[RMDB]
RNA sequence: GGGAACGACUCGAGUAGAGUCGAAAAAGCUCCAGUGACUUGACAGGCACAGAAUUGCCAAAGGUUCGCAAGCAAUUGACUUCGUCAUUUAAGCCUACCUCCUCUUUUGGUCAGUCGCUUCUUUCUCAACAGCAACCUAAACUGUCCCCUGUCCACGACAUGAGCACACGUUCGCGUGUGCUCAUGUAAAAGAAACAACAACAACAAC
Reactivity to 2A3 in 0.01 (KOAc 150mM, MgCl2 10mM, bicine 150mM(pH8.5), 24C), signal-to-noise 1, nucleotides 027 to 156: a000g050c100u020c040c000a030g010u000g080a040c070u120u090g000a010c040a110g010g030c010a010c050a110g250a000a140u030u200g000c000c000a060a020a000g010g000u030u090c060g000c090a040a070g010c020a020a250u040u080g010a060c040u060u090c190g060u040c050a150u050u030u170a050a010g000c050c000u130a070c000c040u090c030c020u110c050u130u070u120u110g070g000u010c040a030g020u040c000g010c010u040u040c070u000u100u010c000u000c030a040a200c020a000g000c040a050a120c010c020u050a090a150a120c030u030g030u070c020c000c000c000u050g060u070c060c060a020c110g010